Description
Source: RMDB library RNAMAK, as collected in RNAgym. The record gives the reactivity of an RNA of 207 nucleotides to 2A3 and DMS. The DMS profile rests on 3,536 reads. The reactions ran in a buffer of 150 mM KOAc, 10 mM MgCl2 and 150 mM bicine (pH 8.5), at 24 C. The 2A3 profile rests on 2,780 reads.
RNA sequence: GGGAACGACUCGAGUAGAGUCGAAAACGAUUUAGUUCGCUAAAUCGAAAAAAGCGUACUACAAAGCCGAAGAACGUGCAACGUAGUGCCUCCCAAAUAGGAGGCCUAUUGCACGGGAGGCUUUGUAUCGCAAAAAACUCCCUCUUCGGAGGGAGAACUAUCUAAUAACUUUCGAGUUAUUAGAUAGAAAAGAAACAACAACAACAAC
Reactivity to 2A3 in 0.01 (KOAc 150mM, MgCl2 10mM, bicine 150mM(pH8.5), 24C), signal-to-noise 3, nucleotides 027 to 156: c010g000a010u000u000u010a010g020u030u040c140g030c190u010a000a000a000u020c010g080a230a030a010a000a020a010g030c040g020u070a080c060u000a000c020a000a010a000g000c020c020g170a250a030g020a040a030c010g000u000g010c010a040a020c170g100u040a020g010u070g100c010c000u030c000c020c040a190a290a090u300a130g000g000a010g000g000c000c030u010a010u000u040g010c000a000c000g000g000g000a010g010g000c000u010u000u000g000u000a000u020c010g000c000a030a000a000a000a050a080c010u020c000c020c000u000c010u010u030c280g110g000a000g000g000g000a000g020a000a010
Reactivity to DMS in 0.01 (KOAc 150mM, MgCl2 10mM, bicine 150mM(pH8.5), 24C), signal-to-noise 1, nucleotides 027 to 156: c010g010a020u000u000u000a010g010u000u010c220g040c000u000a000a010a030u010c040g010a000a070a060a130a100a160g000c040g020u000a090c110u000a010c000a010a010a060g020c000c000g000a140a120g010a150a170c020g000u000g000c010a030a030c110g030u010a050g010u010g050c000c000u010c000c000c020a070a160a190u000a050g000g010a020g020g040c000c010u000a000u000u010g000c000a040c010g010g010g010a130g010g000c010u000u010u000g010u000a000u000c010g000c010a010a020a060a060a100a100c000u000c000c010c000u010c000u000u010c300g030g020a050g000g020g010a010g020a010a050